[RMDB]
RNA sequence: GGGAACGACUCGAGUAGAGUCGAAAAUAUCUCUGGCGUGGGCGACAUGAUGCUGCAUCCGUUCCAUAUCCACGGCACGCAGUUCCGUAUCUUGUCAGAAAAUGGCAAACCGCCAGCGGCUCAUCGCGUUCUGAAGAUAAUUCGUUAUCUUCAGAACAAAAGAAACAACAACAACAAC
Reactivity to 2A3 in 0.01 (KOAc 150mM, MgCl2 10mM, bicine 150mM(pH8.5), 24C), signal-to-noise 8, nucleotides 027 to 126: u120a060u020c020u000c020u040g040g000c010g030u080g040g020g030c030g030a030c020a050u110g010a050u100g030c020u010g000c010a040u040c010c010g020u090u030c040c030a060u050a070u160c070c050a030c030g000g010c070a020c090g020c020a020g010u090u030c040c010g000u020a020u020c050u030u030g010u000c020a010g110a090a230a040a070u050g020g000c030a070a100a110c040c020g010c020c000a020g020c030g050g000c020u030c040a060u150c070g030c030
Reactivity to DMS in 0.01 (KOAc 150mM, MgCl2 10mM, bicine 150mM(pH8.5), 24C), signal-to-noise 8, nucleotides 027 to 126: u010a110u000c040u010c010u000g010g010c020g040u010g010g010g020c140g010a060c070a050u000g000a090u000g010c020u000g010c030a090u000c030c020g010u000u010c050c060a090u010a060u000c060c100a060c040g000g010c160a060c090g010c050a040g010u000u000c070c090g010u000a050u000c070u000u000g000u000c020a110g010a050a050a090a080u000g000g000c000a020a150a140c130c060g000c010c010a050g010c090g010g010c070u000c060a060u010c130g020c170
Annotation: The record gives the reactivity of an RNA of 177 nucleotides to 2A3 and DMS. The data come from the RNA Mapping Database (RMDB), library OK2TST. Values are in units of 0.01, from 0 to 300, in steps of 10. The RNA was probed in 150 mM KOAc, 10 mM MgCl2 and 150 mM bicine (pH 8.5) at 24 C. For DMS, 13,652 sequencing reads were counted. The 2A3 profile rests on 18,197 reads.